[RMDB]
RNA sequence: GGGAACGACUCGAGUAGAGUCGAAAAUGAAACGAAGUUGUACUGCUGAAACCAGCAGCUACUGCGGCUAAAGCCCAAUUCUGUGAGACGAUUAAGGUGUUGCUGCAAAGUAUCGGGCACAAGUACACCAUACAAAUCCAUUCGUGGAUUUGUAUGGAAAAGAAACAACAACAACAAC
Reactivity to 2A3 in 0.01 (KOAc 150mM, MgCl2 10mM, bicine 150mM(pH8.5), 24C), signal-to-noise 4, nucleotides 027 to 126: u130g010a020a040a040c050g040a070a020g010u060u050g030u060a040c010u010g050c000u030g070a260a150a130c140c010a010g010c000a000g010c010u020a020c010u020g010c000g000g000c050u100a110a040a060g010c020c000c000a010a060u100u000c040u060g090u060g100a080g020a060c090g030a060u060u150a130a050g050g010u060g030u170u110g030c060u030g000c030a030a030a110g050u050a090u120c030g000g030g030c040a020c020a100a010g050u020a030c010a020
Reactivity to DMS in 0.01 (KOAc 150mM, MgCl2 10mM, bicine 150mM(pH8.5), 24C), signal-to-noise 7, nucleotides 027 to 126: u010g010a100a110a080c050g010a070a090g010u000u010g010u000a100c020u000g000c020u000g000a130a120a160c300c020a020g000c010a010g000c120u000a010c020u000g020c010g010g000c040u000a050a080a120g010c010c000c010a070a100u000u010c060u010g010u010g010a090g010a100c120g000a060u000u010a100a110g000g010u010g010u000u010g010c020u000g000c060a030a070a080g010u000a050u000c050g000g000g000c060a040c080a040a080g010u000a060c170a180
Notes:
The data come from the RNA Mapping Database (RMDB), library OK2TRN. Chemical mapping of a 177-nucleotide RNA with 2A3 and DMS. Conditions: 150 mM KOAc, 10 mM MgCl2 and 150 mM bicine (pH 8.5), 24 C.